[RMDB]
RNA sequence: GGGAACGACUCGAGUAGAGUCGAAAAAUACUUCUCAGGAUGGCGCGUUGCAGUCCAACAAGAUCCAGGGACUGUACAGAAUUUUCCUAUACCUCGAGUCGGGUUUGGGAUCUAAGGUUGACUCGCUAAAACUUUACGUGGUUCGCCACGUAAAGAACUGUAUAACCUUCUUCGGAAGGUUAUACAGAAAAGAAACAACAACAACAAC
Reactivity to DMS in 0.01 (KOAc 150mM, MgCl2 10mM, bicine 150mM(pH8.5), 24C), signal-to-noise 2, nucleotides 027 to 156: a080u010a050c060u000u000c020u000c050a180g020g020a030u000g020g020c100g020c070g000u010u000g040c000a030g020u000c020c050a070a120c040a060a110g010a030u000c030c000a190g020g020g000a040c020u020g000u000a120c050a100g010a070a060u010u000u000u010c020c000u000a160u000a080c120c020u000c050g020a030g020u020c000g000g000g030u000u000u000g000g000g020a050u000c040u010a100a100g040g020u000u050g020a060c060u010c040g000c060u000a050a100a100a070c000u000u000u000a000c000g020u010g000g000u000u010c300g030c020c000a000c000g000u010a000a000a020g000a030a090
Reactivity to 2A3 in 0.01 (KOAc 150mM, MgCl2 10mM, bicine 150mM(pH8.5), 24C), signal-to-noise 4, nucleotides 027 to 156: a000u150a060c020u040u030c020u020c030a030g050g040a070u050g040g050c050g010c070g110u090u060g010c000a000g000u000c000c010a040a040c050a080a080g030a060u050c020c040a020g060g000g000a010c010u010g000u030a030c040a050g160a220a130u070u070u050u030c020c000u060a070u080a140c000c010u010c030g010a010g010u030c020g010g010g000u050u100u130g060g000g010a010u010c040u050a060a080g150g010u030u050g020a030c000u030c080g050c040u090a030a070a060a080c000u010u000u000a000c000g010u010g000g020u040u050c120g040c070c000a000c000g000u000a000a000a000g000a010a010

Source information
The record gives the reactivity of an RNA of 207 nucleotides to DMS and 2A3. The reactions ran in a buffer of 150 mM KOAc, 10 mM MgCl2 and 150 mM bicine (pH 8.5), at 24 C. The DMS profile rests on 3,310 reads. DMS adducts were read by reverse transcription with MarathonRT. Source: RMDB library M2RFPK, as collected in RNAgym.